[RMDB]
An RNA of 177 nucleotides, treated with 2A3 and DMS and read out base by base. 2A3 adducts were read by reverse transcription with SuperScript II with manganese.

RNA sequence: GGGAACGACUCGAGUAGAGUCGAAAAGACAAAUGCAGCAUAUUAGGCUAAGCAGGAAAGGGACGGUAGCUCCUGGUGUCAGUUCAUACGCUGUGAUGCAUCUGCGUCGUGCACACAUGCACCCAAAAUAACACGCGGAUUUCGAUCCGCGUGUUAUAAAAGAAACAACAACAACAAC
Reactivity to 2A3 in 0.01 (KOAc 150mM, MgCl2 10mM, bicine 150mM(pH8.5), 24C), signal-to-noise 1, nucleotides 027 to 126: g060a000c040a040a100a010u100g030c000a040g000c010a030u110a130u260u110a140g090g000c000u060a030a050g060c020a030g000g080a030a090a020g020g010g040a000c030g000g070u050a000g080c030u060c050c030u070g040g000u010g020u010c050a020g000u020u000c060a030u070a110c110g040c000u020g010u010g060a160u010g020c000a000u000c030u070g010c050g040u150c070g020u070g000c000a000c000a000c000a000u140g020c040a050c000c030c020a000a110a000
Reactivity to DMS in 0.01 (KOAc 150mM, MgCl2 10mM, bicine 150mM(pH8.5), 24C), signal-to-noise 1, nucleotides 027 to 126: g010a060c090a000a090a110u000g010c000a050g020c040a060u000a210u000u010a110g020g010c000u000a050a090g020c030a030g030g010a060a040a100g030g020g000a060c040g010g010u020a030g000c070u000c020c030u010g000g020u000g010u020c020a120g000u010u000c120a060u000a040c080g030c010u000g000u000g000a110u000g010c040a030u000c060u010g000c150g030u000c130g020u000g000c030a040c050a020c040a000u000g040c040a110c000c010c030a080a050a120
It was measured as part of the RMDB library M2PK90. The DMS profile rests on 891 reads.